Structure probing data (2A3 and DMS) for a 177-nucleotide construct. DMS adducts were read by reverse transcription with MarathonRT. It was measured as part of the RMDB libraries RFM100 and RFMREP.
RNA sequence: GGGAACGACUCGAGUAGAGUCGAAAACCUUCUGGUAAGGGCCCAGGUAGAACACCUGGUCGAUAGGCCGCAGGUGCAAGGUCGGCGACGGCCUCAGCCGAGCGGCACUAAUCGCCCGAGCUCUUACCGUGAUAUUGGAAUUCGUUCCAAUAUCACGAAAAGAAACAACAACAACAAC
Reactivity to 2A3 in 0.01 (KOAc 150mM, MgCl2 10mM, bicine 150mM(pH8.5), 24C), signal-to-noise 9, nucleotides 027 to 126: c010c000u070u060c070u080g010g000u000a000a000g000g000g000c000c000c020a010g010g010u060a080g060a300a030c030a010c050c010u010g000g010u030c010g000a010u010a010g010g010c000c010g000c010a010g010g010u060g030c080a030a010g010g010u000c000g010g030c040g020a110c010g020g000c000c000u010c020a010g000c000c000g060a060g010c010g010g030c010a020c010u020a050a130u000c000g010c010c050c020g010a010g000c000u000c000u000u010a000c010
Reactivity to DMS in 0.01 (KOAc 150mM, MgCl2 10mM, bicine 150mM(pH8.5), 24C), signal-to-noise 9, nucleotides 027 to 126: c030c020u010u020c090u010g000g000u010a000a010g000g010g010c010c010c030a000g000g010u000a080g020a160a250c200a040c010c010u010g000g010u010c010g000a020u010a040g000g010c000c000g010c010a300g010g010u010g010c300a290a020g000g030u000c000g000g010c300g000a230c010g010g000c000c000u000c100a300g000c010c000g010a100g000c000g010g000c000a000c010u010a040a070u000c000g020c060c050c050g010a100g000c000u000c000u000u000a000c010

The RNA was probed in 150 mM KOAc, 10 mM MgCl2 and 150 mM bicine (pH 8.5) at 24 C. Values cover nucleotides 27 to 126.